Annotation
An RNA of 177 nucleotides, treated with 2A3 and DMS and read out base by base. 2A3 adducts were read by reverse transcription with SuperScript II with manganese. The 2A3 profile rests on 1,139 reads.
[RMDB]
RNA sequence: GGGAACGACUCGAGUAGAGUCGAAAACGCGACAAGUCAGAAGACGAUGGACCACAUCGCCGUGCCAUCGCAAAAGACAGGAGGGCAAGAUCAGCACCCUGCUAUCCGCAUUCGAGACCCAACGGCAACGCCUGGUCCUAUUCGUAGGACCAGGCGUAAAAGAAACAACAACAACAAC
Reactivity to 2A3 in 0.01 (KOAc 150mM, MgCl2 10mM, bicine 150mM(pH8.5), 24C), signal-to-noise 3, nucleotides 027 to 126: c140g000c000g050a060c020a140a000g000u060c000a010g100a260a050g100a150c000g010a010u010g020g000a060c180c120a020c040a110u100c090g030c060c010g080u060g030c010c010a000u020c010g000c030a060a140a020a000g010a030c020a010g000g040a030g020g000g040c110a100a050g020a180u140c020a000g050c000a020c010c000c010u000g020c000u010a040u040c010c050g010c050a070u060u070c010g000a010g060a130c000c000c030a050a070c110g050g010c060a030
Reactivity to DMS in 0.01 (KOAc 150mM, MgCl2 10mM, bicine 150mM(pH8.5), 24C), signal-to-noise 1, nucleotides 027 to 126: c200g000c000g020a160c040a040a050g000u000c070a120g080a240a100g000a020c000g000a060u000g060g000a070c190c040a120c180a070u000c130g000c000c030g080u000g010c000c070a000u000c040g000c020a160a080a290a020g020a000c060a180g110g000a010g040g000g060c030a010a000g000a070u000c070a100g000c000a090c020c010c160u000g000c090u060a030u000c000c000g030c070a000u010u010c040g000a010g000a200c000c010c090a040a060c170g000g020c000a110